The record gives the reactivity of an RNA of 207 nucleotides to 2A3 and DMS. 2A3 adducts were read by reverse transcription with SuperScript II with manganese. The DMS profile rests on 2,184 reads. The reactions ran in a buffer of 150 mM KOAc, 10 mM MgCl2 and 150 mM bicine (pH 8.5), at 24 C.
[RMDB]
RNA sequence: GGGAACGACUCGAGUAGAGUCGAAAAACAUAGGCCAUGCUUACGAGCAUGGCCUAUGACGAAUCUCAAGCAAUCAAGCAUUCUACUUCUAUUGCAACACUGAGGAGCUUACGAGCUCCACAGUGAAAAAAGAGAGUAAUGUUCGCAUUACUCUCAACCGAAGAAUAAAGUUCGCUUUAUUCUUCGGAAAAGAAACAACAACAACAAC
Reactivity to 2A3 in 0.01 (KOAc 150mM, MgCl2 10mM, bicine 150mM(pH8.5), 24C), signal-to-noise 4, nucleotides 027 to 156: a000c000a000u000a000g010g010c010c000a000u010g000c000u120u080a110c240g080a020g000c000a000u000g000g010c010c000u000a000u000g000a000c010g060a040a070u010c010u010c030a020a050g000c010a020a060u090c010a070a020g030c030a150u180u030c030u110a080c030u090u030c040u110a070u010u070g010c030a110a030c000a040c010u010g010a040g030g010a010g000c000u060u040a070c210g080a030g000c000u000c010c000a000c000a000g000u000g040a090a000a000a000a000a000g000a000g000a000g000u000a000a000u000g010u010u050c080g000c060a000u000u000a000c000u000c000u000c000a000a010
Reactivity to DMS in 0.01 (KOAc 150mM, MgCl2 10mM, bicine 150mM(pH8.5), 24C), signal-to-noise 1, nucleotides 027 to 156: a220c000a020u010a030g000g040c010c000a020u000g020c000u000u000a150c200g040a120g040c000a030u010g000g020c000c000u000a010u010g000a090c020g000a050a140u020c040u010c030a060a120g000c080a030a090u000c130a070a060g010c050a130u010u000c110u010a060c010u000u010c090u010a200u000u000g010c020a170a240c000a030c000u000g000a140g000g010a020g010c010u000u000a110c280g030a060g000c010u010c000c000a000c000a020g000u010g000a010a000a100a070a130a120g000a010g010a030g040u000a030a020u000g020u010u010c300g020c010a020u010u000a010c020u000c000u000c010a010a050